RNA sequence: GGGAACGACUCGAGUAGAGUCGAAAACGACACGUUCGCGUGUCGAAAAAUCCUAAGUCCAAAGGUAGGAGGGGGACAGCAUCGAUCUCGGAAACGAGGGAGCUGUUUUAUCUCCUAUAAUCUUUGGAUAUGGAAAAAAGUCAUCUUCGGAUGACAAGAUUGUUAGGGGGUUCGCCCCCUAACAAUCAAAAGAAACAACAACAACAAC
Reactivity to 2A3 in 0.01 (KOAc 150mM, MgCl2 10mM, bicine 150mM(pH8.5), 24C), signal-to-noise 1, nucleotides 027 to 156: c010g000a010c000a010c000g020u070u050c110g010c020g070u010g000u020c010g010a010a000a000a060a000u030c020c000u010a010a080g020u000c000c000a020a010a010g060g000u000a000g020g000a010g020g020g000g010g010a000c000a000g000c000a220u250c010g090a080u020c010u000c000g080g100a180a070a090c010g010a000g000g000g030a020g000c010u010g060u030u000u000u010a100u020c000u010c000c000u000a010u010a030a050u000c000u000u000u000g000g000a000u010a070u040g020g000a040a110a000a000a150a000g000u050c000a010u000c010u090u170c300g080g000a000u000g000a010c000a000a000

Conditions: 150 mM KOAc, 10 mM MgCl2 and 150 mM bicine (pH 8.5), 24 C. The record gives the reactivity of an RNA of 207 nucleotides to 2A3. Reactivities are given for positions 27 through 156.